[RMDB]
RNA sequence: GGGAACGACUCGAGUAGAGUCGAAAAGAUAUGGAUGAAGGACAUGCAUAGCCUCGGAAACGAGGUGGGUGCAACAGCCUUAUCCUAAGUCAAAACAAGUAGUACGAGUUCGCUCGUACUACUUGAACGUAACCUAGACCUUCGGGUCUAGGUUACGAAAAGAAACAACAACAACAAC
Reactivity to 2A3 in 0.01 (KOAc 150mM, MgCl2 10mM, bicine 150mM(pH8.5), 24C), signal-to-noise 1, nucleotides 027 to 126: g010a050u110a030u100g000g020a030u100g300a020a050g040g040a030c040a240u020g000c000a000u000a020g050c020c000u020c000g000g020a090a130a020c000g000a000g000g030u010g060g150g000u000g030c020a050a030c060a040g070c020c000u000u020a010u000c010c000u030a130a010g080u000c110a010a030a120a220c010a010a000g020u020a000g000u000a000c000g010a000g000u030u090c220g010c080u000c000g000u000a010c000u000a000c000u010u020g000a000a020
Reactivity to DMS in 0.01 (KOAc 150mM, MgCl2 10mM, bicine 150mM(pH8.5), 24C), signal-to-noise 2, nucleotides 027 to 126: g050a010u000a300u000g000g020a000u000g010a020a010g020g000a020c110a250u000g010c000a000u000a300g000c000c000u000c000g010g000a120a070a170c000g010a020g000g010u000g020g040g010u010g010c000a010a010c170a160g020c000c000u000u000a030u000c040c000u000a020a110g000u010c040a060a030a110a220c000a010a020g020u010a010g010u000a000c000g000a010g010u000u010c260g020c000u000c000g000u000a010c010u000a000c000u000u000g050a030a090
Conditions: 150 mM KOAc, 10 mM MgCl2 and 150 mM bicine (pH 8.5), 24 C. Structure probing data (2A3 and DMS) for a 177-nucleotide construct. The DMS profile rests on 1,072 reads. It was measured as part of the RMDB library TTRDEL. DMS adducts were read by reverse transcription with MarathonRT. 2A3 adducts were read by reverse transcription with SuperScript II with manganese. Reactivities are given for positions 27 through 126.